Structure probing data (DMS and 2A3) for a 177-nucleotide construct. 2A3 is a SHAPE reagent: it acylates the 2'-hydroxyl of flexible nucleotides of all four kinds.

RNA sequence: GGGAACGACUCGAGUAGAGUCGAAAAAAAUGCGGCAAAAGAAAAGGAAGGAAAAUCCAUGGACCGACCCCAUCAUCUCCACCCCGUAGGAACUACGAGAUCACCCCAAGGACGCCUUCGGCAUCCAGUACAAUAAUGCUUUCGAGCAUUAUUGUACAAAAGAAACAACAACAACAAC
Reactivity to DMS in 0.01 (KOAc 150mM, MgCl2 10mM, bicine 150mM(pH8.5), 24C), signal-to-noise 4, nucleotides 027 to 126: a020a020a050u010g020c040g000g010c040a050a040a030a050g000a080a050a110a070g000g010a070a070g010g010a050a030a100a090u020c040c020a070u000g000g000a050c040c020g020a110c080c010c020c030a090u000c080a070u000c050u000c030c030a060c030c010c030c050g000u020a050g000g020a070a070c050u010a030c020g010a090g010a060u010c070a050c020c010c010c030a060a090g010g010a050c070g010c010c020u030u010c080g010g040c030a070u000c010c020a150
Reactivity to 2A3 in 0.01 (KOAc 150mM, MgCl2 10mM, bicine 150mM(pH8.5), 24C), signal-to-noise 7, nucleotides 027 to 126: a000a000a010u130g010c020g000g000c030a060a050a040a050g080a050a140a070a020g090g040a010a060g040g060a080a070a000a060u030c010c010a030u070g040g020a030c020c010g040a070c010c000c000c000a030u070c010a010u010c020u020c020c010a040c010c010c000c000g020u040a020g020g060a070a040c030u050a030c050g030a020g010a090u050c020a050c010c010c010c000a000a030g020g000a020c010g030c000c000u090u060c080g040g000c010a020u020c020c000a000